[RMDB]
The record gives the reactivity of an RNA of 177 nucleotides to DMS and 2A3. The RNA was probed in 150 mM KOAc, 10 mM MgCl2 and 150 mM bicine (pH 8.5) at 24 C.

RNA sequence: GGGAACGACUCGAGUAGAGUCGAAAAUGCAUUUCUGAGACUUCAACUGAACAAGUUGACGUUUCUCAUGAGACUUCUGACGACGAGUGGGCUGCUGCAGUUGAUGAAGCGUUCCCUCUCGAUGAAGCUUUUUAACGAAGUUCGCUUCGUUAAAAAGAAAAGAAACAACAACAACAAC
Reactivity to DMS in 0.01 (KOAc 150mM, MgCl2 10mM, bicine 150mM(pH8.5), 24C), signal-to-noise 6, nucleotides 027 to 126: u010g010c140a110u000u000u000c030u000g010a010g010a030c010u000u000c000a010a000c000u010g000a130a110c200a110a020g000u000u010g000a020c050g010u000u000u000c000u000c070a040u000g010a070g010a190c040u000u000c010u000g000a190c300g000a070c120g010a030g010u010g010g000g020c260u010g020c010u000g010c020a040g010u000u010g000a160u000g000a040a020g010c020g000u000u000c000c010c000u000c010u000c020g010a110u000g000a040a050g010
Reactivity to 2A3 in 0.01 (KOAc 150mM, MgCl2 10mM, bicine 150mM(pH8.5), 24C), signal-to-noise 4, nucleotides 027 to 126: u080g000c020a060u000u070u050c040u030g000a000g000a010c000u010u010c010a000a010c010u040g070a080a040c070a210a020g000u000u000g000a000c000g000u030u110u020c020u000c010a040u150g020a010g030a080c000u030u010c020u050g110a090c050g010a000c030g000a020g000u080g000g040g000c030u120g000c010u030g020c030a060g010u230u170g140a170u050g020a050a000g000c010g020u070u080c000c000c010u000c000u000c010g040a040u050g040a020a010g000

Reactivities are given for positions 27 through 126. DMS (dimethyl sulfate) methylates the pairing face of unpaired adenines and cytosines. DMS adducts were read by reverse transcription with MarathonRT.